[RMDB]
RNA sequence: GGGAACGACUCGAGUAGAGUCGAAAAAUGCUUGUUGCUAUCAGCUUCAGGCCUUUGAUUUUUUCAACAAUGAAGCUUGGGAGAAAUUUAAGAAAGGUGAUGUCAUGGACUUUGUAAACCUUUGUUAUGCAGCAACAACACUAGCAAGAGGUCAUUCCUAAGUGAAAAACUUCGGUUUUUCACUUAGAAAAGAAACAACAACAACAAC
Reactivity to 2A3 in 0.01 (KOAc 150mM, MgCl2 10mM, bicine 150mM(pH8.5), 24C), signal-to-noise 3, nucleotides 027 to 156: a000u070g000c020u010u000g000u020u010g010c030u030a090u160c020a010g000c000u010u000c000a020g010g020c000c040u100u080u050g040a050u100u130u150u090u090u080c040a040a030c010a030a020u050g030a020a000g000c080u210u160g070g130g030a070g100a050a170a130u160u210u080a110a020g030a060a020a000g010g010u020g040a070u100g020u100c050a090u120g090g000a070c020u110u070u070g060u070a060a050a080c000c000u010u010u030g050u040u010a030u050g030c010a010g000c010a000a040c010a020a000c000a010c040u050a010g010c020a070a030g050a020g100g070u040c010a010u040u000c010
Reactivity to DMS in 0.01 (KOAc 150mM, MgCl2 10mM, bicine 150mM(pH8.5), 24C), signal-to-noise 2, nucleotides 027 to 156: a090u010g020c030u010u000g000u000u000g000c010u000a150u000c070a060g010c000u000u010c030a070g010g040c090c060u000u000u000g000a020u000u000u000u000u000u000c030a040a080c040a090a150u000g000a050a040g040c050u010u010g070g010g000a170g010a100a120a130u000u000u000a060a140g020a020a050a040g010g020u000g000a110u000g010u000c040a080u000g040g010a080c030u000u000u010g000u000a120a120a070c010c010u000u000u020g030u000u000a030u010g000c070a100g030c040a100a020c020a030a050c010a030c050u010a050g000c030a020a050g020a070g020g000u000c000a230u000u000c020

About this RNA:
The record gives the reactivity of an RNA of 207 nucleotides to 2A3 and DMS. It was measured as part of the RMDB library OK3TST. The RNA was probed in 150 mM KOAc, 10 mM MgCl2 and 150 mM bicine (pH 8.5) at 24 C.